[RMDB]
RNA sequence: GGGAACGACUCGAGUAGAGUCGAAAAGAAGCAAUAAGUUAGACGUGAGUAUGGCUAUACAAAUCAUCUGGAACGUAAGUUCUAAUGUAUGUAUUGUAUGUUGUAUUUGCAGUUUUAUGAUAGCAAAGUCAGGUUACAAAUUCGUUUGUAACCUGACAAAAGAAACAACAACAACAAC
Reactivity to DMS in 0.01 (KOAc 150mM, MgCl2 10mM, bicine 150mM(pH8.5), 24C), signal-to-noise 4, nucleotides 027 to 126: g000a120a180g030c020a050a050u010a070a200g020u000u000a050g010a030c020g010u010g010a010g010u000a010u010g000g010c020u040a010u000a000c000a000a050a300u030c000a010u000c030u010g010g010a000a010c000g000u030a100a190g020u000u000c010u000a010a040u020g020u040a040u020g000u030a120u010u000g010u010a030u010g010u010u000g020u000a020u000u000u000g010c000a110g020u000u000u000u010a030u000g010a110u010a090g020c050a070a070a090
Reactivity to 2A3 in 0.01 (KOAc 150mM, MgCl2 10mM, bicine 150mM(pH8.5), 24C), signal-to-noise 7, nucleotides 027 to 126: g050a040a010g030c030a050a120u110a170a040g110u070u120a020g010a030c010g010u010g000a010g010u010a000u030g020g000c060u110a000u010a040c010a000a060a070u070c000a010u000c020u050g000g000a000a000c000g060u200a110a080g010u000u000c010u020a110a110u080g200u140a000u000g040u010a060u050u020g010u010a030u020g010u010u010g000u010a030u020u000u010g040c090a050g000u000u010u020u030a080u050g110a100u140a060g040c050a070a030a000
Structure probing data (DMS and 2A3) for a 177-nucleotide construct.
Source: RMDB libraries RFM100 and RFMREP, as collected in RNAgym.
Values cover nucleotides 27 to 126.